Annotation:
Source: RMDB library OK1LIB, as collected in RNAgym. The record gives the reactivity of an RNA of 177 nucleotides to 2A3 and DMS. For 2A3, 1,569 sequencing reads were counted.

RNA sequence: GGGAACGACUCGAGUAGAGUCGAAAAAAGUGUCAAUUACCAGAUCUCCGAAGAGGGAGUGACCGGUCUAAUUGAUGGUCGCCGAGGAGAGCUCUAGCUGAUUCAUGCCCAUCAGGUGUCAGGGACGCUCAGGCAAGAAGUUCGCUUCUUGCCUGAGAAAAGAAACAACAACAACAAC
Reactivity to 2A3 in 0.01 (KOAc 150mM, MgCl2 10mM, bicine 150mM(pH8.5), 24C), signal-to-noise 3, nucleotides 027 to 126: a000a000g110u090g020u000c010a020a010u060u020a030c000c000a040g000a050u000c010u010c000c000g100a270a120g100a140g200g090g000a050g010u050g000a010c000c010g030g010u000c040u080a130a070u040u100g030a040u060g040g020u050c030g010c060c020g030a030g000g030a060g010a010g000c030u000c020u040a030g000c020u020g040a060u050u060c020a020u150g020c000c040c020a040u060c050a060g050g050u060g040u060c060a050g000g000g080a010c020g020
Reactivity to DMS in 0.01 (KOAc 150mM, MgCl2 10mM, bicine 150mM(pH8.5), 24C), signal-to-noise 3, nucleotides 027 to 126: a110a070g020u030g020u000c030a060a040u000u000a020c030c070a020g010a200u010c010u000c010c000g000a110a140g030a260g000g000g010a050g030u000g020a130c160c100g010g000u020c120u010a070a060u020u000g010a040u000g000g010u000c050g000c020c030g000a220g010g010a070g030a060g000c000u000c040u010a110g010c010u000g010a110u000u000c110a040u020g000c000c040c020a090u010c080a050g050g030u010g000u020c020a100g000g000g000a120c170g000
DMS adducts were read by reverse transcription with MarathonRT.
2A3 adducts were read by reverse transcription with SuperScript II with manganese.